[RMDB]
RNA sequence: GGGAACGACUCGAGUAGAGUCGAAAACCCUUAGCAUUCGUGCUAAGGGAAAUAACGGUCGGCUCAUGCAGCUAGUCGAAAAUGCAGCUCGACCUUUUGGUAAAAUCUGGCCGUUCGCGGCCAGAAAACUGAUAAGUCGUUUCGACGACUUAUCAGUAAAAGAAACAACAACAACAAC
Reactivity to 2A3 in 0.01 (KOAc 150mM, MgCl2 10mM, bicine 150mM(pH8.5), 24C), signal-to-noise 2, nucleotides 027 to 126: c000c000c010u030u000a010g000c000a030u010u040c170g090u040g020c000u000a010a000g010g000g030a060a140a000u160a050a020c070g010g000u000c010g000g010c030u000c040a030u080g060c000a010g050c030u190a050g230u300c040g070a080a020a000a010u050g000c060a000g020c080u100c100g000a010c000c000u010u100u050u050g040g000u090a020a040a010a060u020c000u010g000g000c010c000g000u010u030c190g000c010g060g030c000c000a000g000a000a000a020
Reactivity to DMS in 0.01 (KOAc 150mM, MgCl2 10mM, bicine 150mM(pH8.5), 24C), signal-to-noise 3, nucleotides 027 to 126: c000c000c000u000u000a020g010c000a010u000u030c230g020u000g020c000u000a000a010g010g020g000a000a020a050u010a070a080c140g010g000u000c000g010g030c030u000c050a020u000g000c160a250g000c070u020a080g030u000c050g000a030a100a100a020u010g010c130a040g000c010u020c010g000a010c010c000u000u000u000u000g020g020u010a060a110a090a090u000c000u000g000g010c000c000g050u000u000c250g020c020g010g020c000c000a000g000a000a010a040
An RNA of 177 nucleotides, treated with 2A3 and DMS and read out base by base. For DMS, 2,365 sequencing reads were counted. Source: RMDB library M2PK50, as collected in RNAgym. For 2A3, 1,824 sequencing reads were counted. Conditions: 150 mM KOAc, 10 mM MgCl2 and 150 mM bicine (pH 8.5), 24 C.